Record summary: Chemical mapping of a 207-nucleotide RNA with 2A3.

[RMDB]
RNA sequence: GGGAACGACUCGAGUAGAGUCGAAAACGCGAUGGAUACGUCCAUCGCGAAUCCGUCCAAGCCGCGGACGUUAAACUGUGGCACGGUUGUGCCUAGGUGCAACCCUGCUUAUUAUGGCGGCACCCCUGCCCAAGCUACCGUCUACGGACGGUAGCAACUCAAAAUGAGCAUUCGUGCUCAUUUUGAGAAAAGAAACAACAACAACAAC
Reactivity to 2A3 in 0.01 (KOAc 150mM, MgCl2 10mM, bicine 150mM(pH8.5), 24C), signal-to-noise 3, nucleotides 027 to 156: c010g010c010g000a010u000g000g000a010u000a040c190g120u020c000c010a000u000c000g000c000g000a000a000u020c000c000g000u000c010c000a060a040g000c000c000g010c000g020g010a020c020g010u000u030a030a020a050c120u100g030u180g100g000c000a000c000g020g000u010u010g020u010g000c020c050u090a210g060g060u010g030c030a000a010c000c000c010u000g000c000u120u150a090u120u100a080u300g070g000c000g000g010c000a110c000c020c010c000u070g030c050c050c010a070a050g000c000u000a000c000c000g000u000c010u020a050c300g090g000a000c000g000g000u000a000g000c000a000a000

The data come from the RNA Mapping Database (RMDB), library OK3TST. The reactions ran in a buffer of 150 mM KOAc, 10 mM MgCl2 and 150 mM bicine (pH 8.5), at 24 C.